[RMDB]
RNA sequence: GGGAACGACUCGAGUAGAGUCGAAAAAGCGGACCGUACGCGGUCCGCAAUGUCAAUGAUGUCUAAAAAAUUACUACGAUUUAAUUCGAAUUGCUGUGAGAUCAAUCUUAUACAAUUCUGAGACAAAGAACAACUCCUUAUUCGUAAGGAGUUGUUCAAAAGAAACAACAACAACAAC
Reactivity to 2A3 in 0.01 (KOAc 150mM, MgCl2 10mM, bicine 150mM(pH8.5), 24C), signal-to-noise 6, nucleotides 027 to 126: a000g010c010g010g000a000c030c010g020u040a030c300g010c000g050g000u000c010c010g000c000a000a030u050g020u020c040a040a160u150g080a060u110g070u030c040u140a060a030a020a040a100a090u150u080a110c130u080a070c090g050a090u080u060u240a110a130u090u080c030g000a010a000u020u010g010c120u060g040u020g040a010g010a040u100c060a140a150u040c140u020u020a020u010a020c000a000a030u000u000c030u110g030a020g030a040c030a030a120a040
Reactivity to DMS in 0.01 (KOAc 150mM, MgCl2 10mM, bicine 150mM(pH8.5), 24C), signal-to-noise 2, nucleotides 027 to 126: a130g000c000g000g000a010c000c000g050u000a090c150g030c010g060g010u000c010c000g070c000a010a020u040g000u000c100a140a130u030g000a150u000g000u000c020u000a000a030a050a090a030a000u000u020a060c230u040a110c200g000a090u000u000u000a040a060u010u010c130g000a020a020u000u000g010c260u000g030u010g000a010g010a030u010c210a070a200u000c000u000u000a020u000a060c010a000a000u000u000c000u010g000a090g000a010c040a050a050a110